[RMDB]
RNA sequence: GGGAACGACUCGAGUAGAGUCGAAAACUCUUAUCGAGGGCGGCAGAGGGACUGGCCCGAUGAAGCCCGGCAACCUAACUUUAUUUAAGCGUAAAGUGAAGGUGCUAAUUCCAGCAAAAUGGUGUAUAAACGACCGUUAACUUCGGUUAACGGUCAAGAUAUGUAUAAAGUUCGCUUUAUACAUAUCAAAAGAAACAACAACAACAAC
Reactivity to DMS in 0.01 (KOAc 150mM, MgCl2 10mM, bicine 150mM(pH8.5), 24C), signal-to-noise 2, nucleotides 027 to 156: c020u000c000u000u000a170u000c010g030a030g050g010g020c010g000g000c050a120g020a150g000g010g010a150c070u000g000g000c030c000c010g020a080u000g010a130a160g000c010c000c030g000g010c000a050a040c000c000u020a190a040c010u000u010u010a030u010u010u030a120a300g080c300g000u000a000a000a050g020u000g040a060a030g020g010u000g010c010u000a070a140u000u000c040c020a060g040c030a070a070a060a180u000g010g000u010g000u010a140u000a050a160a190c110g000a020c000c010g030u000u000a000a020c000u000u010c270g080g010u020u000a000a020c010g030g010u010c000a000a030
Reactivity to 2A3 in 0.01 (KOAc 150mM, MgCl2 10mM, bicine 150mM(pH8.5), 24C), signal-to-noise 3, nucleotides 027 to 156: c010u020c000u020u070a120u070c050g000a040g020g100g000c070g020g040c010a010g020a040g000g020g020a040c020u040g060g060c000c000c010g100a110u010g010a000a010g000c000c000c000g000g010c010a080a100c000c010u010a010a010c000u000u020u050a040u020u170u120a130a040g150c050g030u000a000a000a000g010u020g080a110a050g000g000u000g000c000u010a010a030u150u030c000c000a010g000c110a040a000a090a130u170g070g010u080g060u070a090u110a130a190a010c150g000a010c000c010g000u000u010a010a000c010u010u020c090g040g000u000u000a010a000c000g010g000u010c000a000a000